[RMDB]
RNA sequence: GGGAACGACUCGAGUAGAGUCGAAAACUCGGAAGGUGAAACUGUGAAAAAGAUGCUGGAAGACACAUCACCAACCAAUGUGGACAUUGAUAGAAAUUACAAAGGACCAACAUUAAGUCUUCCUCUAUCGGUCCAUUUUAUUCGUAAAAUGGACCGAAAAAGAAACAACAACAACAAC
Reactivity to 2A3 in 0.01 (KOAc 150mM, MgCl2 10mM, bicine 150mM(pH8.5), 24C), signal-to-noise 1, nucleotides 027 to 126: c030u040c020g000g040a060a010g000g000u050g000a100a170a120c080u050g000u080g180a080a020a040a040a000g050a110u100g040c080u010g040g010a020a000g010a040c000a000c000a180u120c000a020c030c000a000a010c000c000a000a010u000g000u040g050g000a030c080a070u020u110g000a000u050a090g040a100a190a040u180u120a060c000a050a040a070g060g020a090c000c000a040a090c090a030u100u050a090a000g000u000c000u030u000c040c000u030c030u010a040
Reactivity to DMS in 0.01 (KOAc 150mM, MgCl2 10mM, bicine 150mM(pH8.5), 24C), signal-to-noise 1, nucleotides 027 to 126: c010u000c060g000g060a100a180g010g010u000g000a040a140a170c150u010g000u000g000a030a060a060a150a150g000a100u000g010c070u000g020g000a010a020g010a050c020a060c060a120u000c000a040c010c040a000a280c030c010a040a030u000g040u000g010g020a260c060a070u000u000g030a210u000a040g000a070a000a100u000u000a300c080a040a060a120g010g010a200c000c010a030a020c020a030u010u000a060a020g010u040c000u000u000c010c000u000c100u000a130
This 177-nucleotide RNA was probed chemically with 2A3 and DMS. The 2A3 profile rests on 742 reads. The RNA was probed in 150 mM KOAc, 10 mM MgCl2 and 150 mM bicine (pH 8.5) at 24 C. Values cover nucleotides 27 to 126. Values are in units of 0.01, from 0 to 300, in steps of 10. Source: RMDB library OK2TST, as collected in RNAgym. 2A3 adducts were read by reverse transcription with SuperScript II with manganese. The DMS profile rests on 739 reads.